[RMDB]
RNA sequence: GGGAACGACUCGAGUAGAGUCGAAAAGGAAAUAAUGCACAUAAUCCAGUCGCAGACGCUAAAAAUUACGCUGCGUCGCGACGGAUGUGGCAACGCACACCGAAGUGCAAACGGUAGCGUAAAAAAACUUAUUCUCAUCGUUCGCGAUGAGAAUAAGAAAAGAAACAACAACAACAAC
Reactivity to 2A3 in 0.01 (KOAc 150mM, MgCl2 10mM, bicine 150mM(pH8.5), 24C), signal-to-noise 3, nucleotides 027 to 126: g090g040a050a120a050u180a050a070u120g040c050a050c020a270u210a250a140u130c010c020a030g010u000c000g000c080a110g000a030c000g000c000u100a080a090a030a090a130u260u190a060c110g050c150u050g000c000g010u000c010g000c000g000a010c010g000g000a010u000g010u010g000g010c020a020a000c000g000c000a040c010a010c100c000g030a110a020g220u180g080c000a040a100a000c000g020g010u020a020g010c010g000u080a080a010a010a010a030a040a030
Reactivity to DMS in 0.01 (KOAc 150mM, MgCl2 10mM, bicine 150mM(pH8.5), 24C), signal-to-noise 2, nucleotides 027 to 126: g030g010a060a130a050u000a080a140u010g000c000a080c000a060u000a120a060u000c010c020a120g000u000c010g000c010a100g030a010c010g000c000u020a010a080a080a120a130u010u010a070c200g010c170u010g010c000g000u000c010g010c000g000a010c010g000g010a010u000g020u020g000g010c000a040a050c080g010c010a080c170a080c020c010g010a050a090g010u010g020c140a050a080a060c010g000g000u010a040g000c000g000u000a010a000a010a050a040a050a100